An RNA of 207 nucleotides, treated with 2A3 and read out base by base.
It was measured as part of the RMDB library VIROID.
RNA sequence: GGGAACGACUCGAGUAGAGUCGAAAAAUCACUGGCGUCCAGCGGAGAAACAGGAGCUCGACUCCUUCCUAUCUCUGCUGCCUCCACAUCCGGUCGUCGCUGAGGCGUCGCCACCCCUCGCCCGGAGCUUCUCUGUGCUUAAUAGCCGGUGGAUACACGCUCUAUUAUGCUUCGGCAUAAUAGAGCGAAAAGAAACAACAACAACAAC
Reactivity to 2A3 in 0.01 (KOAc 150mM, MgCl2 10mM, bicine 150mM(pH8.5), 24C), signal-to-noise 1, nucleotides 027 to 156: a000u040c010a000c040u040g000g010c020g010u060c100c010a000g000c000g000g000a000g000a000a080a030c110a020g040g000a000g000c060u140c300g220a300c170u010c030c000u030u030c030c020u060a080u010c000u000c000u000g000c000u000g010c000c000u050c040c030a150c010a130u100c060c000g040g000u060c080g020u010c030g150c190u120g040a050g100g020c000g000u040c080g070c040c000a070c010c000c030c000u000c000g000c010c000c030g000g000a010g020c070u230u050c040u000c020u050g110u090g070c020u080u240a160a050u060a160g000c020c010g000g000u020g000g030a050u050a070c080a010